[RMDB]
RNA sequence: GGGAACGACUCGAGUAGAGUCGAAAAUAACGCUGACCUUGCGGCACAGUAACGUGAAAUUUCCUGUCCGUCGGCGGCGGGAGAAUUUCUUACGUAAGCGUCUGGUUUUGCGCACGGCACGACGAUAGUACUGAUGCAGAUUCGUCUGCAUCAGUACAAAAGAAACAACAACAACAAC
Reactivity to DMS in 0.01 (KOAc 150mM, MgCl2 10mM, bicine 150mM(pH8.5), 24C), signal-to-noise 3, nucleotides 027 to 126: u010a100a110c070g020c040u020g000a130c020c030u000u000g000c000g010g030c050a050c080a050g010u000a070a040c110g010u000g010a030a020a030u000u010u000c020c010u000g010u010c000c020g010u020c240g020g000c080g030g010c000g000g020g010a050g010a020a020u000u010u000c020u000u000a040c020g000u000a130a120g010c160g030u020c050u010g000g000u000u000u000u000g020c050g040c030a070c110g010g010c020a040c050g010a050c060g030a090u010a130
Reactivity to 2A3 in 0.01 (KOAc 150mM, MgCl2 10mM, bicine 150mM(pH8.5), 24C), signal-to-noise 3, nucleotides 027 to 126: u050a020a030c030g010c080u040g060a230c000c000u020u040g010c050g090g050c070a020c000a070g090u110a110a030c030g050u030g040a020a010a020u020u030u000c010c000u030g030u050c050c020g050u080c100g200g140c110g000g010c030g000g020g020a080g120a020a020u040u010u010c000u080u140a020c020g050u040a120a110g100c010g110u010c030u010g050g050u000u110u150u120g020c000g010c010a020c030g020g000c020a010c090g120a020c040g040a060u060a140